[RMDB]
RNA sequence: GGGAACGACUCGAGUAGAGUCGAAAAACAGGUGCGGACUGAUACGUCAGUCCGCACCUGAGGUGCUUGCUAUUUCACCUAAAUCGAAAUAGCACUGGCAGGCCACCUUACGAGGUGCCCUGCCAGAAAAAGCAACCGAAGUUCGCUUCGGUUGCAAUCUAUAUUCACAGUUCGCUGUGAAUAUAGAAAAAGAAACAACAACAACAAC
Reactivity to 2A3 in 0.01 (KOAc 150mM, MgCl2 10mM, bicine 150mM(pH8.5), 24C), signal-to-noise 1, nucleotides 027 to 156: a010c000a000g060g000u000g030c000g000g030a010c000u000g010a010u040a060c270g080u000c000a000g010u010c020c010g020c010a010c010c000u000g040a000g000g000u010g010c040u050u010g020c000u000a000u020u000u000c000a010c000c020u080a110a080a000u060c080g000a000a000a000u000a000g000c000a000c000u000g000g050c000a010g000g000c030c010a010c000c010u010u030a050c270g090a020g000g000u000g000c010c000c000u000g020c000c000a000g010a000a000a000a000a000g000c010a000a010c000c000g000a000a000g000u060u170c250g010c080u000u000c000g010g000u000u000g020c000a000a000